[RMDB]
RNA sequence: GGGAACGACUCGAGUAGAGUCGAAAAACGACUGAGCAUACGUGCUCAGUCGAACCUGCAUCCCUUACUCACAUGAGUAGUCGUAUCUAUUUCAGUGGGACUACUCGGUGAGUAAGGAUAGCAGGAAGAGAUUGUUUAUGUUCGCAUAAACAAUCUCAAAAGAAACAACAACAACAAC
Reactivity to DMS in 0.01 (KOAc 150mM, MgCl2 10mM, bicine 150mM(pH8.5), 24C), signal-to-noise 5, nucleotides 027 to 126: a110c030g000a020c010u010g000a010g010c000a040u010a090c180g010u000g010c000u000c000a010g010u000c000g010a040a030c010c000u000g000c000a080u010c250c020c020u000u000a000c000u000c000a020c000a040u010g020a020g000u000a000g010u000c010g020u010a030u030c010u000a140u010u020u020c220a020g030u000g000g010g010a000c000u000a000c010u000c000g000g010u000g000a010g000u000a000a000g000g000a010u010a060g010c000a010g000g010a080a080
Reactivity to 2A3 in 0.01 (KOAc 150mM, MgCl2 10mM, bicine 150mM(pH8.5), 24C), signal-to-noise 9, nucleotides 027 to 126: a000c010g000a000c000u000g000a000g000c010a020u030a090c240g120u040g000c000u000c000a000g000u010c000g000a000a010c000c000u000g000c000a030u050c050c010c000u000u000a000c000u010c010a020c020a240u170g000a000g000u000a000g010u000c100g300u090a110u100c050u050a210u080u300u180c100a020g010u040g040g070g000a000c000u000a000c000u000c000g000g000u000g000a000g000u000a000a000g000g000a000u010a020g000c000a000g000g000a030a020